An RNA of 177 nucleotides, treated with 2A3 and DMS and read out base by base.

[RMDB]
RNA sequence: GGGAACGACUCGAGUAGAGUCGAAAAGUGGCCUCGAAGUACUUGCGCGUCGUCGCGAGCGCGUCGGCGACGAGCUUGCCGAUCGCGCGGUACUCCCAGUACGGGAAGAGGCGGCUCGCGGCGAUCAUAGUAGGACGAUGUUCGCAUCGUCCUACUAAAAAGAAACAACAACAACAAC
Reactivity to 2A3 in 0.01 (KOAc 150mM, MgCl2 10mM, bicine 150mM(pH8.5), 24C), signal-to-noise 2, nucleotides 027 to 126: g080u040g130g000c000c020u010c030g070a090a010g000u030a010c000u220u300g060c010g010c030g000u040c000g020u010c080g000c000g020a010g000c030g000c010g000u000c010g190g160c130g010a010c000g020a030g030c020u000u050g000c000c000g070a140u220c030g000c000g000c000g010g000u000a000c010u060c000c010c000a140g100u230a090c250g000g030g000a040a150g000a010g010g000c000g020g000c030u040c000g020c010g080g000c020g020a030u040c050a140
Reactivity to DMS in 0.01 (KOAc 150mM, MgCl2 10mM, bicine 150mM(pH8.5), 24C), signal-to-noise 3, nucleotides 027 to 126: g040u000g000g010c010c000u010c020g010a190a120g010u000a000c020u000u020g070c030g040c000g020u000c070g000u010c190g020c000g010a010g000c020g030c000g010u000c010g010g020c170g000a030c020g010a030g010c050u000u010g020c020c010g000a050u010c040g030c000g030c010g010g010u000a020c010u000c000c000c010a250g020u010a110c260g010g000g010a080a130g000a060g020g010c000g010g010c010u000c040g040c090g010g020c060g000a060u010c120a150

Background: For 2A3 the reverse transcriptase was SuperScript II with manganese. The DMS profile rests on 3,207 reads. It was measured as part of the RMDB library OK2TRN. For DMS the reverse transcriptase was MarathonRT. Reactivities are given for positions 27 through 126.